[RMDB]
RNA sequence: GGGAACGACUCGAGUAGAGUCGAAAACUCGAACGGUUCGCCGUUCGAGAAAAGCGCGUCAGCGCUACGAUGCAAGCGCAAGCGCGUGCAUCGUAAAUGAAUAAACUUGUGUGUUCGCACACAAGAAGCUUUAGGACGGGUUCGCCCGUCCUAAAGCAAAAGAAACAACAACAACAAC
Reactivity to 2A3 in 0.01 (KOAc 150mM, MgCl2 10mM, bicine 150mM(pH8.5), 24C), signal-to-noise 1, nucleotides 027 to 126: c020u010c000g000a020a000c000g050g000u070u090c170g080c100c000g010u010u010c000g000a000g010a000a020a000a030g000c020g000c030g100u130c150a130g030c000g010c040u010a000c010g020a000u010g060c010a000a070g000c020g050c100a190a120g160c040g040c030g050u000g010c020a030u010c010g040u020a050a030a080u150g120a050a100u140a170a060a080c010u020u010g010u010g000u000g030u060u050c190g020c080a010c000a000c000a010a030g010a010a010
Chemical mapping of a 177-nucleotide RNA with 2A3. For 2A3, 924 sequencing reads were counted. The reactions ran in a buffer of 150 mM KOAc, 10 mM MgCl2 and 150 mM bicine (pH 8.5), at 24 C.